[RMDB]
RNA sequence: GGGAACGACUCGAGUAGAGUCGAAAAAUCUUACAACAGGCAAAAGCACAGUUGCUGGAAUUUGACUGUACCAAAGUUGACAUCAACAAUUUGCAAAGUGUCGAGGGUAUUGGCAUUCUUAAUGCAGUCUAUUUACUUCGUUCGCGAAGUAAAUAGAAAAAGAAACAACAACAACAAC
Reactivity to 2A3 in 0.01 (KOAc 150mM, MgCl2 10mM, bicine 150mM(pH8.5), 24C), signal-to-noise 3, nucleotides 027 to 126: a000u010c000u030u090a030c020a100a030c000a050g010g080c020a050a150a010a100g030c010a060c040a180g030u100u050g040c020u050g050g020a040a040u030u030u050g020a040c020u030g010u070a040c030c000a120a030a070g030u040u030g050a040c010a100u170c010a050a060c020a100a160u110u140u170g030c060a060a040a040g020u020g000u030c010g010a060g060g110g010u240a090u080u040g030g020c010a030u050u040c030u050u220a040a050u080g000c020a040g020
Reactivity to DMS in 0.01 (KOAc 150mM, MgCl2 10mM, bicine 150mM(pH8.5), 24C), signal-to-noise 6, nucleotides 027 to 126: a070u000c010u000u000a100c040a050a050c040a090g020g010c040a060a060a080a110g010c040a070c130a090g000u000u000g030c040u000g010g010a060a100u000u010u010g020a050c020u000g010u000a070c050c060a060a070a050g010u000u000g010a080c120a070u000c050a080a060c130a080a090u000u000u000g020c050a060a050a080g010u000g020u000c020g010a050g000g010g010u000a070u000u010g000g000c010a020u000u000c100u000u000a050a050u000g000c070a080g010